About this RNA
The data come from the RNA Mapping Database (RMDB), library TTRDES. An RNA of 177 nucleotides, treated with 2A3 and DMS and read out base by base.
RNA sequence: GGGAACGACUCGAGUAGAGUCGAAAAGAUAUGGACCAUACGUUCUUUUGACGAAAUGGGUCUCGGAAACGAGACCUAAUUUCGAUAAGAACAGUAUGGUCCUAAGUCAAACAGGCGUUCGCGCCUGGGUGAAUCUUUACUUCGGUAAAGAUUCACCAAAAGAAACAACAACAACAAC
Reactivity to 2A3 in 0.01 (KOAc 150mM, MgCl2 10mM, bicine 150mM(pH8.5), 24C), signal-to-noise 1, nucleotides 027 to 126: g040a010u080a030u160g000g020a000c020c000a030u020a010c000g000u000u000c020u080u140u170u170g290a160c040g000a000a000a000u010g000g020g000u000c020u000c000g050g050a100a070a010c010g000a020g000a000c000c000u000a000a050u000u010u010c010g000a010u030a020a010g010a010a000c160a070g000u010a000u000g010g000u030c000c010u000a000a010g000u000c000a000a090a060c010a010g020g000c020g060u110u120c300g000c000g000c140c000u000g000
Reactivity to DMS in 0.01 (KOAc 150mM, MgCl2 10mM, bicine 150mM(pH8.5), 24C), signal-to-noise 2, nucleotides 027 to 126: g020a060u020a300u000g010g000a000c000c010a030u000a000c000g000u000u000c000u000u000u010u030g010a280c170g000a010a010a010u000g000g010g000u000c000u000c010g010g010a170a120a180c000g000a010g030a000c010c000u000a000a010u010u000u000c000g010a080u000a040a000g000a030a000c020a090g060u000a000u000g000g000u000c000c000u020a020a080g000u000c010a110a150a300c000a000g030g000c000g020u000u040c210g030c020g000c000c010u000g000

For DMS the reverse transcriptase was MarathonRT. For 2A3 the reverse transcriptase was SuperScript II with manganese. Conditions: 150 mM KOAc, 10 mM MgCl2 and 150 mM bicine (pH 8.5), 24 C. As a SHAPE reagent, 2A3 marks flexible, mostly unpaired nucleotides at the ribose 2'-OH.